[RMDB]
RNA sequence: GGGAACGACUCGAGUAGAGUCGAAAACAUAGUGUUUCACAAUGUGCGCCAUUAACAUUGUUUAUGCAAGCACGUUUCGCAAUGUACGGCGCAGAAACAUUGCCAACACAAAUACGCUUCACGAUGUAAAACAUCGGUGCGUUCGCGCACCGAUGAACAAGCAGUCAAUCUUCGGAUUGACUGCUUGAAAAGAAACAACAACAACAAC
Reactivity to 2A3 in 0.01 (KOAc 150mM, MgCl2 10mM, bicine 150mM(pH8.5), 24C), signal-to-noise 4, nucleotides 027 to 156: c040a070u250a040g010u010g010u040u080u060c100a020c020a030a040u050g000u020g040c010g030c010c010a060u110u130a090a010c010a010u020u030g080u040u130u110a090u150g040c070a050a100g100c100a070c170g000u030u100u110c070g000c000a000a000u000g000u010a010c050g010g010c010g040c000a000g030a010a040a000c010a000u000u050g030c020c000a020a010c010a010c000a040a180a030u220a050c100g040c090u140u150c070a050c110g110a090u130g060u250a050a090a070a010c010a000u000c010g000g000u000g000c000g010u030u040c160g010c000g000c040a000c000c000g000a000u000g000a010a000
Reactivity to DMS in 0.01 (KOAc 150mM, MgCl2 10mM, bicine 150mM(pH8.5), 24C), signal-to-noise 1, nucleotides 027 to 156: c070a150u000a060g030u000g030u000u010u010c030a070c000a020a140u000g010u000g000c080g030c010c010a120u020u000a070a030c030a010u000u000g000u000u000u000a050u000g040c080a030a150g010c140a130c050g000u000u030u010c170g030c020a010a030u000g030u000a030c140g020g030c080g030c000a080g010a050a050a100c010a030u010u010g000c100c030a070a080c070a080c020a040a140a170u010a010c040g020c020u010u000c020a050c050g000a150u020g030u000a010a050a160a180c000a010u000c010g060g000u000g000c010g020u000u000c300g020c030g030c010a010c010c000g030a000u010g000a070a060